[RMDB]
RNA sequence: GGGAACGACUCGAGUAGAGUCGAAAAAUGCGCCGUCAUAGCGCGCUAGUCGUACUAUGGAUCAGCGCCUGAUCGGCCCUGGUACGUAGGCCUAGGCCGUACUGGCCGCACUAGUCGUAUGCGCUGCGCAAUACGGUCACUUCGGUGACCGUAUUGCAAAAGAAACAACAACAACAAC
Reactivity to 2A3 in 0.01 (KOAc 150mM, MgCl2 10mM, bicine 150mM(pH8.5), 24C), signal-to-noise 2, nucleotides 027 to 126: a000u090g000c030g010c000c000g040u060c020a070u040a050g150c020g000c020g000c050u010a010g060u060c050g040u030a070c000u010a020u100g070g020a080u060c020a010g010c010g030c030c030u210g050a230u160c070g000g010c000c000c000u010g000g010u050a060c080g060u030a040g000g050c010c050u130a070g000g000c010c020g030u040a170c110u130g000g040c020c020g020c000a000c000u000a010g030u020c010g010u060a040u110g020c050g000c060u050g020c000
Reactivity to DMS in 0.01 (KOAc 150mM, MgCl2 10mM, bicine 150mM(pH8.5), 24C), signal-to-noise 4, nucleotides 027 to 126: a080u000g010c020g020c020c080g010u010c040a080u000a030g030c030g010c150g010c010u010a050g010u000c090g010u000a060c000u000a020u020g000g000a050u000c040a030g010c300g020c020c020u000g010a120u030c300g010g000c000c060c040u000g000g010u000a030c020g010u000a040g000g020c110c160u000a120g010g030c020c000g020u020a060c140u010g010g030c020c020g020c150a020c030u000a010g010u000c030g020u010a060u000g020c080g000c040u010g000c140